[RMDB]
RNA sequence: GGGAACGACUCGAGUAGAGUCGAAAAUCACAAUUUCAGUUAGGAAACAUUUUUAUAUUUGGAAGCAAGAUUUGACUCUGUGGUAAUGAGUUGACUGUAUUUUGAGAUGUAGGACAUUUUAGAAAGUGCCUAAGUCCUGGUCAGGCGCAGUGGCUCACCUACUAGCGCUAUUCGUAGCGCUAGUAGGAAAAGAAACAACAACAACAAC
Reactivity to DMS in 0.01 (KOAc 150mM, MgCl2 10mM, bicine 150mM(pH8.5), 24C), signal-to-noise 1, nucleotides 027 to 156: u000c020a070c060a090a120u000u020u000c050a090g030u000u000a120g010g010a130a110a160c040a050u030u000u000u000u040a110u000a110u090u020u010g000g010a060a100g000c060a120a110g010a300u010u000u000g020a070c020u080c020u000g010u020g040g020u010a060a080u000g010a060g000u000u000g030a040c040u020g020u000a130u000u000u000u020g020a070g000a050u000g000u000a070g030g010a050c040a030u000u000u000u000a220g000a100a090a040g020u010g010c020c010u000a060a170g020u000c000c020u000g010g000u000c050a080g020g020c080g060c030a110g030u000g010g050c070u000c090a130
Reactivity to 2A3 in 0.01 (KOAc 150mM, MgCl2 10mM, bicine 150mM(pH8.5), 24C), signal-to-noise 2, nucleotides 027 to 156: u040c010a020c020a040a080u090u200u190c040a050g040u070u150a090g000g100a080a070a020c080a100u100u080u050u210u130a190u080a160u200u180u130g060g010a070a000g000c060a070a010g030a120u070u060u070g010a060c010u000c040u060g070u050g000g030u070a050a020u040g030a020g040u010u070g120a030c010u000g010u060a090u010u250u020u040g100a110g030a050u080g040u100a050g010g020a010c000a020u100u080u000u000a100g060a140a090a020g040u070g050c000c000u040a050a000g030u000c000c000u020g000g000u000c030a020g000g000c040g000c040a020g020u010g030g030c030u020c010a040